The record gives the reactivity of an RNA of 177 nucleotides to DMS and 2A3.
Conditions: 150 mM KOAc, 10 mM MgCl2 and 150 mM bicine (pH 8.5), 24 C.
Source: RMDB libraries RFM100 and RFMREP, as collected in RNAgym.
[RMDB]
RNA sequence: GGGAACGACUCGAGUAGAGUCGAAAAAGACUCUACGGAGUCAUGGGAUAUGAUGACAAAAAUACGAUAUCUCUAAGGCUAAUUGCUGUGCGGAUGAAAUGUAUUUGCACGUCAGUCUGAUCCCAAAGUAAUCAAGCAAAUUCGUUUGCUUGAUUACAAAAGAAACAACAACAACAAC
Reactivity to DMS in 0.01 (KOAc 150mM, MgCl2 10mM, bicine 150mM(pH8.5), 24C), signal-to-noise 9, nucleotides 027 to 126: a110g000a010c000u000c000u000a010c010g000g010a010g000u000c000a070u010g000g000g010a020u000a070u010g010a070u000g000a100c100a020a110a020a010a010u000a010c010g000a150u020a040u000c000u000c010u000a120a150g000g000c010u010a100a120u040u030g010c010u010g000u010g020c260g000g000a010u010g000a060a090a090u030g010u000a010u000u000u000g020c270a070c120g000u000c020a010g010u000c010u000g000a100u000c000c000c000a060a080a130
Reactivity to 2A3 in 0.01 (KOAc 150mM, MgCl2 10mM, bicine 150mM(pH8.5), 24C), signal-to-noise 9, nucleotides 027 to 126: a000g000a000c000u000c000u000a010c020g010g000a000g000u000c010a010u020g030g000g000a010u020a050u120g060a020u050g030a040c060a030a150a010a010a000u070a030c030g060a040u020a030u100c020u000c010u050a070a040g020g000c020u050a200a140u240u290g000c030u060g050u090g070c100g030g010a020u050g090a070a100a070u170g030u050a010u010u010u030g080c120a040c090g010u010c010a010g070u000c010u030g040a040u020c010c000c000a000a010a000